[RMDB]
Background
Chemical mapping of a 170-nucleotide RNA with 2A3 and DMS. The data come from the RNA Mapping Database (RMDB), library 15KLIB. The reactions ran in a buffer of 150 mM KOAc, 10 mM MgCl2 and 150 mM bicine (pH 8.5), at 24 C.
RNA sequence: GGGAACGACUCGAGUAGAGUCGAAAAAACAUGAAGCGCACUGAGCCGCCAGGAUGAGUCCAUAGCGAUAGGAGGGGAUGCUAGGAGUCGGCGGCGACCGAAGCGAGGGGGAAAGUAAAGAGAGCAAGGGGGGGUUACUUCGGUAACCCCAAAAGAAACAACAACAACAAC
Reactivity to 2A3 in 0.01 (KOAc 150mM, MgCl2 10mM, bicine 150mM(pH8.5), 24C), signal-to-noise 1, nucleotides 027 to 129: a000a000c080a030u050g000a040a040g000c040g000c000a110c060u040g000a030g000c000c080g000c100c010a010g060g080a130u230g100a020g050u080c010c000a070u160a060g000c040g030a050u090a020g070g020a010g000g000g000g000a000u000g070c000u050a010g000g000a000g040u050c020g000g050c020g020g010c000g000a020c000c000g020a010a000g050c070g010a070g000g000g000g000g000a010a000a000g010u030a000a020a000g000a030g000a000g040c020a010a000g050g010g000
Reactivity to DMS in 0.01 (KOAc 150mM, MgCl2 10mM, bicine 150mM(pH8.5), 24C), signal-to-noise 2, nucleotides 027 to 129: a050a170c120a020u050g060a160a060g060c300g030c020a130c040u010g020a000g010c020c070g020c000c070a040g090g000a060u150g000a030g050u020c040c000a170u020a000g000c060g000a000u190a000g140g000a070g020g020g020g020a090u070g100c130u060a070g010g010a020g040u000c110g020g020c000g000g080c000g010a000c100c060g000a090a130g020c040g000a010g000g000g000g040g000a090a000a040g000u040a050a000a150g050a060g030a000g070c140a030a120g040g000g000